Notes: The data come from the RNA Mapping Database (RMDB), libraries RFM100 and RFMREP. Chemical mapping of a 177-nucleotide RNA with DMS and 2A3. For DMS, 1,760 sequencing reads were counted.
RNA sequence: GGGAACGACUCGAGUAGAGUCGAAAAGAAAGAAGAAGGUGAUCUUUACAUCUGGUCCACGGUGGUUUAUUGUUCAUCGUUUGUUUAUGAUAAACCAUCGUGCCGCAGAUGAUAAGAGCACCUUCAACAACAUCUGGGCAUUCGUGCCCAGAUGUUGAAAAGAAACAACAACAACAAC
Reactivity to DMS in 0.01 (KOAc 150mM, MgCl2 10mM, bicine 150mM(pH8.5), 24C), signal-to-noise 2, nucleotides 027 to 126: g020a050a050a040g000a090a130g000a020a000g020g000u000g000a000u020c000u000u000u000a300c040a000u000c000u000g000g000u030c300c030a000c000g020g000u000g020g000u000u000u020a000u030u000g000u000u010c050a030u060c100g020u010u030u080g000u000u000u000a000u000g000a000u000a000a000a000c000c000a030u010c000g030u000g000c200c300g000c000a020g040a000u000g000a300u000a070a020g000a020g000c000a000c010c000u000u000c010a080a130
Reactivity to 2A3 in 0.01 (KOAc 150mM, MgCl2 10mM, bicine 150mM(pH8.5), 24C), signal-to-noise 4, nucleotides 027 to 126: g080a000a060a010g160a060a020g000a010a000g000g000u000g020a030u010c000u010u030u040a040c000a000u020c010u010g000g060u060c040c000a000c000g000g000u000g000g010u010u000u000a000u000u020g060u030u030c050a120u060c180g190u120u150u260g100u030u200u020a030u030g010a000u000a000a000a000c000c000a000u010c000g000u000g000c010c010g180c000a000g010a010u010g030a050u010a010a000g000a000g000c000a000c000c000u000u000c000a000a000
Record summary:
For DMS the reverse transcriptase was MarathonRT. 2A3 adducts were read by reverse transcription with SuperScript II with manganese.